[RMDB]
RNA sequence: GGGAACGACUCGAGUAGAGUCGAAAAGAUUUACGGCGGGAAAGGUCUCGGGCGCGCCGAGGUCCCGGGUGCGGCACCGACCGAAAGGCGCGGAAAUGCGCCACCGACCGAAACCGCCGGAAAGAAAAAUACUAGGCCAUUUCGAUGGCCUAGUAUUAAAAGAAACAACAACAACAAC
Reactivity to DMS in 0.01 (KOAc 150mM, MgCl2 10mM, bicine 150mM(pH8.5), 24C), signal-to-noise 1, nucleotides 027 to 126: g010a170u000u010u020a020c000g000g000c000g000g000g010a100a040a300g000g010u000c030u010c020g000g000g000c000g000c050g020c020c000g010a100g060g010u000c020c080c040g000g000g000u010g000c030g010g030c060a140c060c050g010a060c090c090g000a030a100a070g000g010c000g000c000g000g010a010a130a150u010g000c000g010c000c020a080c080c070g000a030c010c000g010a070a170a220c000c000g010c000c000g000g010a020a010a090g010a020a090a070